Overview:
Chemical mapping of a 177-nucleotide RNA with DMS and 2A3. The DMS profile rests on 12,531 reads. The data come from the RNA Mapping Database (RMDB), library OK2TST. 2A3 adducts were read by reverse transcription with SuperScript II with manganese. Values are in units of 0.01, from 0 to 300, in steps of 10.
RNA sequence: GGGAACGACUCGAGUAGAGUCGAAAAUCAGUUUGGUAUGAACUGGAGCUAUUACAGCCAUUAUGUCGGCGAUAUUUUCGGCGCACCGCUUGCGAUUGAAGGCAUGAUGGCCUUCUUCCUCGAAGCAUGAUAAAUUAUCCUUCGGGAUAAUUUAUCAAAAAGAAACAACAACAACAAC
Reactivity to DMS in 0.01 (KOAc 150mM, MgCl2 10mM, bicine 150mM(pH8.5), 24C), signal-to-noise 8, nucleotides 027 to 126: u010c020a030g000u000u000u000g010g030u010a070u010g010a040a030c020u000g010g010a100g020c100u010a070u000u010a100c250a170g000c000c020a040u000u000a050u010g020u000c030g000g010c040g010a040u010a040u000u000u000u000c070g010g000c050g020c110a080c170c130g010c060u000u000g030c150g000a070u000u000g000a040a030g000g010c010a050u010g010a080u000g000g000c000c020u000u000c060u000u000c030c030u000c120g020a080a100g020c160a150
Reactivity to 2A3 in 0.01 (KOAc 150mM, MgCl2 10mM, bicine 150mM(pH8.5), 24C), signal-to-noise 5, nucleotides 027 to 126: u070c010a000g020u010u030u100g210g060u300a180u300g020a020a010c010u010g010g040a020g020c030u080a060u250u130a120c030a030g020c010c010a010u050u050a040u110g080u060c020g000g030c020g030a020u010a110u120u120u040u090c040g020g010c030g000c040a090c080c080g060c130u050u110g040c050g030a020u000u100g020a020a000g000g000c000a010u100g040a050u060g140g010c000c000u030u020c000u010u000c000c020u040c040g050a030a010g060c050a050